[RMDB]
Structure probing data (2A3) for a 207-nucleotide construct. It was measured as part of the RMDB library RNAMAK. The 2A3 profile rests on 1,890 reads.
RNA sequence: GGGAACGACUCGAGUAGAGUCGAAAAUGACCACGCUGGGUAUGGCUUUCGCCAUGGAGGGAGACGAUCUGAAGCGCGCACGGAUCGUCUUUGAUCUCCAUGCGCGAAAGCAUACCUGUGCUGAAGCGCGCACGGCAACCGAAAGGUGCGUAUGUAAGCUUAUGUCUGUCUUCGGACAGACAUAAGCAAAAGAAACAACAACAACAAC
Reactivity to 2A3 in 0.01 (KOAc 150mM, MgCl2 10mM, bicine 150mM(pH8.5), 24C), signal-to-noise 1, nucleotides 027 to 156: u140g040a020c040c000a010c020g000c010u000g020g000g000u000a030u030g260g130c000u000u000u010c000g010c000c010a010u000g020g000a020g030g000g000a010g000a000c010g010a000u010c000u010g090a200a020g020c020g000c000g030c000a000c020g000g020a000u000c000g030u030c030u090u040u000g000a000u000c010u000c010c000a000u010g030c020g000c000g000a000a000a010g000c010a000u000a000c000c000u000g010u010g000c000u010g020a110a070g000c000g000c000g020c000a030c020g000g000c000a010a000c010c000g060a100a030a030g000g000u000g010c050g000u050a100u160g190u090a210a000

For 2A3 the reverse transcriptase was SuperScript II with manganese.